The record gives the reactivity of an RNA of 177 nucleotides to 2A3 and DMS. The RNA was probed in 150 mM KOAc, 10 mM MgCl2 and 150 mM bicine (pH 8.5) at 24 C. It was measured as part of the RMDB library M2PK50. For 2A3, 6,823 sequencing reads were counted.
RNA sequence: GGGAACGACUCGAGUAGAGUCGAAAAGCGCCCCUUUUCGAAGGGGCGCACUGGUAAUAAAGCCGAAAGGCUAGGCAUUCCUUAUUUGGCGAAAGCCUGCCACUAUUGAGAUCUUCGGAUCUCAAAACUGUUGUGUUAAGUUCGCUUAACACAACAGAAAAGAAACAACAACAACAAC
Reactivity to 2A3 in 0.01 (KOAc 150mM, MgCl2 10mM, bicine 150mM(pH8.5), 24C), signal-to-noise 5, nucleotides 027 to 126: g000c000g000c010c000c000c000u030u020u040u070c180g090a010a010g030g000g000g000c000g000c000a000c000u010g030g000u020a070a100u090a240a240a020g010c020c010g040a090a040a020g000g000c020u010a020g010g000c020a040u010u070c020c000u070u160a270u190u220u170g030g000c030g030a050a020a000g010c010c000u000g000c000c010a050c040u120a210u100u070g000a000g000a000u000c010u030u070c230g120g000a000u010c010u000c010a000a000a010a010
Reactivity to DMS in 0.01 (KOAc 150mM, MgCl2 10mM, bicine 150mM(pH8.5), 24C), signal-to-noise 4, nucleotides 027 to 126: g020c020g040c000c000c000c010u000u000u000u000c150g020a030a010g010g010g010g020c010g010c000a000c050u010g000g020u000a100a090u000a050a090a070g010c010c000g000a130a070a130g010g000c010u000a040g000g010c080a100u000u000c010c000u000u000a160u020u010u000g010g010c030g010a050a040a110g010c000c010u000g010c030c020a070c240u000a130u000u000g010a010g000a010u010c000u000u010c140g020g000a010u000c000u000c000a000a020a080a150